[RMDB]
RNA sequence: GGGAACGACUCGAGUAGAGUCGAAAACGCCAAACGCGACCAUAGCGCUUGCGCCAGCGGGUCCGACACCAAUUCGGCGUGCAUCGAGCGCGCCAUGCGCUACCCAAUGAUGCGGCGAGCGAAGGCGGGCUUCAUAGACAUUCGUGUCUAUGAAGCCAAAAGAAACAACAACAACAAC
Reactivity to 2A3 in 0.01 (KOAc 150mM, MgCl2 10mM, bicine 150mM(pH8.5), 24C), signal-to-noise 3, nucleotides 027 to 126: c050g000c030c010a090a170a060c050g020c030g120a110c050c060a130u120a080g140c020g000c020u040u160g020c000g040c010c010a020g010c040g040g030g000u020c000c040g020a040c020a080c060c070a050a120u190u110c030g010g020c000g020u030g080c020a080u230c140g050a050g070c000g000c000g000c020c020a030u120g010c010g020c030u030a030c000c000c010a000a060u080g010a060u130g000c040g040g030c000g040a040g010c000g000a030a010g000g020c000g000
Reactivity to DMS in 0.01 (KOAc 150mM, MgCl2 10mM, bicine 150mM(pH8.5), 24C), signal-to-noise 3, nucleotides 027 to 126: c050g030c010c010a060a190a260c060g020c040g020a160c120c040a120u010a080g010c050g000c050u000u000g050c030g060c010c020a070g000c300g000g000g020u000c180c010g000a080c190a050c200c150a070a200u000u000c050g000g000c010g000u010g020c230a130u020c090g010a080g010c010g010c010g030c100c140a040u010g000c020g000c010u000a070c000c010c030a060a200u000g000a030u000g010c000g000g010c020g010a080g000c060g000a170a260g000g010c000g030
The record gives the reactivity of an RNA of 177 nucleotides to 2A3 and DMS. Source: RMDB library OK2TST, as collected in RNAgym. DMS adducts were read by reverse transcription with MarathonRT. Reactivities are given for positions 27 through 126. Conditions: 150 mM KOAc, 10 mM MgCl2 and 150 mM bicine (pH 8.5), 24 C.